[RMDB]
RNA sequence: GGGAACGACUCGAGUAGAGUCGAAAAGAUAUGGAUCGCACAUGGGAGCGUCCGGUCGGAAACGACCGAAGACGCGAGGAUCAUGUUGCGAUCCUAAGUCAAACACCUGUACUUCGGUACAGGUGAAGCUUAAAGUAGGGUUCGCCCUACUUUAAGCAAAAGAAACAACAACAACAAC
Reactivity to DMS in 0.01 (KOAc 150mM, MgCl2 10mM, bicine 150mM(pH8.5), 24C), signal-to-noise 5, nucleotides 027 to 126: g010a040u010a300u020g000g000a010u000c000g030c010a030c010a010u000g000g030g010a080g010c000g020u000c010c010g010g010u000c000g020g000a090a070a180c000g010a020c000c000g010a110a100g020a010c010g030c000g000a050g010g010a120u010c010a020u000g010u010u010g030c000g020a000u000c000c000u000a010a060g010u000c020a170a150a290c010a010c000c000u010g000u000a000c000u000u030c230g020g000u000a000c010a000g000g000u000g000a020a070
Reactivity to 2A3 in 0.01 (KOAc 150mM, MgCl2 10mM, bicine 150mM(pH8.5), 24C), signal-to-noise 4, nucleotides 027 to 126: g020a010u050a040u110g000g000a000u000c000g010c000a010c000a020u000g020g090g050a280g020c000g010u000c010c000g010g000u020c000g030g000a050a010a040c010g000a000c000c000g060a220a050g000a010c010g010c000g010a080g040g040a120u110c000a010u030g170u230u160g020c020g000a000u020c000c000u010a000a000g000u000c010a020a100a070c010a000c000c000u000g010u020a000c010u040u120c300g180g000u000a000c010a000g060g000u010g000a000a010

Chemical mapping of a 177-nucleotide RNA with DMS and 2A3. For 2A3, 14,663 sequencing reads were counted. It was measured as part of the RMDB library TTRDES. Reactivities are given for positions 27 through 126.